[RMDB]
RNA sequence: GGGAACGACUCGAGUAGAGUCGAAAAGAAAAGAAAAGCCCGCUAACAGGCUGAAGAAAGAAACGGACGCUACUCCUGUUAGCGAAAAACGGACAAAAGAAAGUCCGAAAGUAGCGUCUAAAGAAAACAUCAUGGUACUAUUCGUAGUACCAUGAUGAAAAGAAACAACAACAACAAC
Reactivity to 2A3 in 0.01 (KOAc 150mM, MgCl2 10mM, bicine 150mM(pH8.5), 24C), signal-to-noise 1, nucleotides 027 to 126: g010a000a020a000a000g150a040a140a000a030g150c020c020c020g000c000u020a000a000c000a000g110g000c120u140g100a100a000g110a250a080a040g170a010a130a050c080g000g000a000c000g010c010u000a000c000u010c040c000u000g000u000u000a000g000c010g090a100a000a000a000a000c010g000g000a000c020a000a100a090a040g130a080a010a070g010u000c000c000g000a090a040a000g000u000a000g040c030g000u000c000u020a020a000a000g070a000a020a000a000
Reactivity to DMS in 0.01 (KOAc 150mM, MgCl2 10mM, bicine 150mM(pH8.5), 24C), signal-to-noise 2, nucleotides 027 to 126: g000a110a080a080a140g000a190a110a300a140g040c080c030c140g000c030u000a040a050c010a030g020g000c300u030g000a110a090g040a120a120a140g010a070a100a110c210g010g000a020c030g040c050u000a000c030u010c010c040u010g000u030u090a000g000c000g010a040a010a010a020a190c030g000g000a010c000a000a110a150a110g000a090a230a130g040u000c000c000g010a020a030a000g000u000a000g000c000g000u000c000u000a020a020a080g000a040a060a040a140
The data come from the RNA Mapping Database (RMDB), library OK1LIB. Structure probing data (2A3 and DMS) for a 177-nucleotide construct. As a SHAPE reagent, 2A3 marks flexible, mostly unpaired nucleotides at the ribose 2'-OH. 2A3 adducts were read by reverse transcription with SuperScript II with manganese. For DMS, 1,293 sequencing reads were counted. Values cover nucleotides 27 to 126.